[RMDB]
RNA sequence: GGGAACGACUCGAGUAGAGUCGAAAAGAGCGAUUAAACAAAGGGGUAGAGCUACAUAUUAGAUAGCUGUAUAAUCGUUCAAGUUACAUCAAAACAUCUUCAAUAUUUAUUACUUACUUUCCUUUCUGCCAGAGUACGGUAUUCGUACCGUACUCAACAUUUCACGCAGAUUCGUCUGCGUGAAAUGAAAAGAAACAACAACAACAAC
Reactivity to DMS in 0.01 (KOAc 150mM, MgCl2 10mM, bicine 150mM(pH8.5), 24C), signal-to-noise 1, nucleotides 027 to 156: g020a000g020c000g000a060u000u000a060a090a200c050a070a090a000g020g020g020g050u020a060g000a100g020c020u000a020c030a150u000a170u010u000a060g000a050u000a010g000c000u000g030u000a120u010a040a040u000c090g000u010u000c040a100a070g010u000u000a050c040a080u000c110a100a100a160a060c000a050u000c020u020u000c040a010a040u000a060u010u010u000a070u010u000a070c030u000u000a040c070u010u000u000c020c000u000u010u010c000u000g000c030c070a240g000a010g000u000a010c020g010g060u020a020u000u000c300g020u000a030c020c000g010u000a020c010u020c000a020a040
Reactivity to 2A3 in 0.01 (KOAc 150mM, MgCl2 10mM, bicine 150mM(pH8.5), 24C), signal-to-noise 6, nucleotides 027 to 156: g020a000g000c000g000a000u030u050a040a120a070c080a050a110a050g080g010g020g000u040a040g020a000g050c010u020a010c010a070u290a160u210u180a110g170a270u020a000g020c000u000g030u050a070u050a040a000u010c010g010u000u000c020a030a010g030u050u110a070c040a100u140c050a060a150a070a070c020a080u050c050u280u110c090a130a160u080a190u180u200u140a140u110u090a070c020u050u030a030c000u030u060u110c010c010u030u070u060c020u070g090c020c020a050g000a000g010u000a000c000g000g030u000a020u000u060c090g030u010a000c000c000g000u000a000c000u000c000a000a000
An RNA of 207 nucleotides, treated with DMS and 2A3 and read out base by base. The RNA was probed in 150 mM KOAc, 10 mM MgCl2 and 150 mM bicine (pH 8.5) at 24 C. For 2A3, 3,431 sequencing reads were counted. It was measured as part of the RMDB library M2RFPK. The DMS profile rests on 1,956 reads.